[RMDB]
RNA sequence: GGGAACGACUCGAGUAGAGUCGAAAAAAAAUGUAAACAGGAUCACAUAUGGGGCCUGUCCCAGAUAUGUUAAGCAAAACACUCUGAAAUUGGCAACAGGGAUGCGAAAUGUACCAGAGAAACAAACCCUCUACAGUAACUUCGGUUACUGUAGAGGAAAAGAAACAACAACAACAAC
Reactivity to DMS in 0.01 (KOAc 150mM, MgCl2 10mM, bicine 150mM(pH8.5), 24C), signal-to-noise 2, nucleotides 027 to 126: a000a110a110a020u020g000u030a070a020a050c040a030g000g000a060u030c050a040c070a160u030a120u020g060g040g000g010c000c020u010g000u030c030c010c010a000g020a090u000a010u000g000u010u000a010a120g000c170a050a020a010a120c090a060c120u000c040u000g000a070a040a040u030u030g000g000c090a080a020c000a020g000g020g010a140u010g010c030g000a080a030a070u020g020u010a050c230c060a090g010a090g010a290a010a050c130a010a060a120c150
Reactivity to 2A3 in 0.01 (KOAc 150mM, MgCl2 10mM, bicine 150mM(pH8.5), 24C), signal-to-noise 2, nucleotides 027 to 126: a000a000a000a000u190g010u050a100a150a030c050a040g020g080a090u090c030a020c000a030u250a100u180g000g000g090g000c000c040u050g030u100c000c000c000a000g070a040u080a010u080g050u070u060a050a040g000c030a090a000a010a050c030a000c010u000c000u000g090a070a070a240u090u100g010g020c030a000a030c040a220g000g000g040a000u040g000c010g040a000a160a000u180g000u050a050c050c050a000g000a000g020a080a160a010c020a000a000a000c010
Structure probing data (DMS and 2A3) for a 177-nucleotide construct. Values are in units of 0.01, from 0 to 300, in steps of 10. Source: RMDB library OK1LIB, as collected in RNAgym. The RNA was probed in 150 mM KOAc, 10 mM MgCl2 and 150 mM bicine (pH 8.5) at 24 C. For DMS, 2,103 sequencing reads were counted.